The record gives the reactivity of an RNA of 177 nucleotides to 2A3 and DMS.
DMS adducts were read by reverse transcription with MarathonRT.
The RNA was probed in 150 mM KOAc, 10 mM MgCl2 and 150 mM bicine (pH 8.5) at 24 C.
The data come from the RNA Mapping Database (RMDB), libraries RFM100 and RFMREP.
RNA sequence: GGGAACGACUCGAGUAGAGUCGAAAAGAGAGCGGGAACUGGAAAACGCCUCGCUUUUUUCCUGUAAAACACCGCAACGCAGGAAAAGCGCAUGCUUAUCGGGACAACAACCCAACGCGGCAGGUGUCCCAAAAUAGUUAUUCGUAACUAUUUUGGGAAAAGAAACAACAACAACAAC
Reactivity to 2A3 in 0.01 (KOAc 150mM, MgCl2 10mM, bicine 150mM(pH8.5), 24C), signal-to-noise 9, nucleotides 027 to 126: g050a000g010a000g000c010g000g010g010a050a070c040u100g060g120a090a130a020a020c050g020c010c000u020c010g000c000u040u010u000u000u010u010c000c000u010g040u050a040a050a020a010c020a010c020c010g020c050a090a100c040g000c020a050g130g000a050a080a020a030g020c070g010c100a090u270g000c010u030u050a070u190c060g010g010g050a040c040a130a030c020a040a090c200c000c000a020a020c050g000c000g020g010c030a040g020g010u030g030u050
Reactivity to DMS in 0.01 (KOAc 150mM, MgCl2 10mM, bicine 150mM(pH8.5), 24C), signal-to-noise 6, nucleotides 027 to 126: g000a040g010a020g020c000g040g010g000a060a300c300u020g000g000a080a100a100a130c110g010c300c000u000c020g000c010u010u000u000u000u010u010c000c000u000g010u030a060a040a120a080c010a040c030c020g010c060a120a120c060g000c010a040g010g000a040a040a040a020g000c000g020c160a050u040g020c000u010u000a080u020c120g010g000g020a080c130a060a080c300a070a080c010c000c010a080a090c070g010c050g010g000c090a100g010g000u000g000u000